[RMDB]
RNA sequence: GGGAACGACUCGAGUAGAGUCGAAAAGGGGUCCGACUCAACAGCUCCAAACUUCAUCGAUCUAUACUGAAGCCUCCACGGUAUAGGGAGAAGGUAGGAGACAUGAGUCGGACGGAGGCACCCAAAACUACUCUUUGGCUUCGGCCAAAGAGUAGAACCUAAUUAUAAUCUUCGGAUUAUAAUUAGGAAAAGAAACAACAACAACAAC
Reactivity to DMS in 0.01 (KOAc 150mM, MgCl2 10mM, bicine 150mM(pH8.5), 24C), signal-to-noise 1, nucleotides 027 to 156: g000g000g040g000u000c030c000g040a000c000u000c000a050a160c170a180g000c000u000c000c010a100a090a300c000u000u000c020a170u030c220g010a130u010c010u000a000u000a010c020u000g000a050a130g010c020c000u010c010c010a300c030g000g030u000a000u010a010g010g000g010a080g000a000a000g000g030u010a300g000g010a030g010a060c050a130u000g000a000g030u010c010g000g010a000c000g030g010a040g140g060c030a090c010c000c000a010a050a030a150c000u000a010c000u000c010u020u000u010g010g000c000u000u000c300g060g090c000c000a000a010a000g020a040g000u000a010g010a130a180
Reactivity to 2A3 in 0.01 (KOAc 150mM, MgCl2 10mM, bicine 150mM(pH8.5), 24C), signal-to-noise 5, nucleotides 027 to 156: g030g000g150g010u010c000c000g020a000c010u010c050a290a130c080a200g030c000u000c010c010a300a300a100c020u040u010c030a160u300c030g000a000u010c000u010a000u000a000c000u020g050a120a030g000c000c000u000c000c000a000c010g000g000u000a000u000a000g000g000g000a020g000a000a010g030g010u050a030g000g010a000g010a000c010a220u300g000a000g000u000c000g000g000a000c000g000g000a000g000g000c000a020c010c000c000a020a120a030a050c000u030a000c000u000c000u000u000u000g000g000c010u060u070c260g120g000c000c000a010a000a000g000a000g000u000a000g000a000a010
Description
Source: RMDB library RNAMAK, as collected in RNAgym. Chemical mapping of a 207-nucleotide RNA with DMS and 2A3. Reactivities are rounded to 0.1 and cut off at 0 and 3. The reactions ran in a buffer of 150 mM KOAc, 10 mM MgCl2 and 150 mM bicine (pH 8.5), at 24 C.